[RMDB]
An RNA of 177 nucleotides, treated with 2A3 and DMS and read out base by base. Conditions: 150 mM KOAc, 10 mM MgCl2 and 150 mM bicine (pH 8.5), 24 C. For DMS the reverse transcriptase was MarathonRT. For 2A3 the reverse transcriptase was SuperScript II with manganese.

RNA sequence: GGGAACGACUCGAGUAGAGUCGAAAAGGCACAAUGGGGGAGCGGCUGUGAGGCGACCUGCUCAGCGGGCAUGUGGGCUGGGCUCGAGGCAGAGGCGGUGCUGAGACGACUGGGUCGGCGCAUUGCAACUGGAUUACCAGUUCGCUGGUAAUCCAGUAAAAGAAACAACAACAACAAC
Reactivity to 2A3 in 0.01 (KOAc 150mM, MgCl2 10mM, bicine 150mM(pH8.5), 24C), signal-to-noise 4, nucleotides 027 to 126: g070g000c040a030c040a160a120u160g030g000g000g030g010a050g020c040g030g000c020u060g040u040g070a030g050g020c030g020a040c000c000u020g000c010u000c030a010g020c060g060g000g050c060a090u120g080u140g050g050g030c070u090g030g010g000c020u030c050g050a040g030g020c000a020g000a050g040g020c030g050g010u070g010c030u040g010a020g030a060c070g020a040c040u150g000g040g060u040c020g050g000c030g000c030a060u030u190g020c020a040
Reactivity to DMS in 0.01 (KOAc 150mM, MgCl2 10mM, bicine 150mM(pH8.5), 24C), signal-to-noise 3, nucleotides 027 to 126: g000g000c050a070c130a090a080u050g020g000g020g000g020a040g020c060g010g020c030u020g000u030g000a100g000g040c010g000a100c040c050u020g000c020u010c050a070g030c050g000g000g020c060a060u010g000u020g010g000g000c090u020g000g000g020c040u020c060g010a090g000g020c090a080g000a050g000g000c060g000g020u000g000c070u000g010a150g000a060c050g020a080c070u010g000g000g000u000c020g020g020c060g010c040a060u010u000g020c120a110